[RMDB]
RNA sequence: GGGAACGACUCGAGUAGAGUCGAAAACAUCUUUUGUAGUUGCUACCGACUUAUACCAAAAGUUAUCAAGAAUAGGUCUUAAUAUUCAACUUGUUCAAGAAACACAUAUUUUUGCUACAUUAUUAGCGAUGACUAAUAUCUUCGGAUAUUAGUCAUCAAAAGAAACAACAACAACAAC
Reactivity to DMS in 0.01 (KOAc 150mM, MgCl2 10mM, bicine 150mM(pH8.5), 24C), signal-to-noise 5, nucleotides 027 to 126: c080a120u000c040u000u010u000u000g010u000a060g030u010u010g010c050u000a100c140c050g010a050c060u000u000a100u010a150c120c040a060a070a080a060g010u000u000a090u000c020a030a300g000a000a020u000a000g010g010u000c080u000u010a070a100u010a090u010u020c150a100a040c040u000u010g010u000u000c030a030a300g000a040a050a020c090a070c140a030u010a050u000u000u010u000u000g010c030u000a030c090a110u010u000a070u020u000a080g000c130
Reactivity to 2A3 in 0.01 (KOAc 150mM, MgCl2 10mM, bicine 150mM(pH8.5), 24C), signal-to-noise 8, nucleotides 027 to 126: c020a080u070c020u060u130u040u080g090u070a050g010u020u080g040c040u060a070c020c010g030a040c040u100u110a080u080a160c040c040a050a050a030a070g020u030u030a190u220c020a030a020g010a030a020u010a020g010g030u010c030u110u270a290a210u180a220u190u180c040a020a020c010u020u040g030u050u030c020a040a020g000a030a070a010c050a010c040a050u080a170u140u110u050u090u100g000c010u010a040c030a160u150u160a120u130u110a170g050c020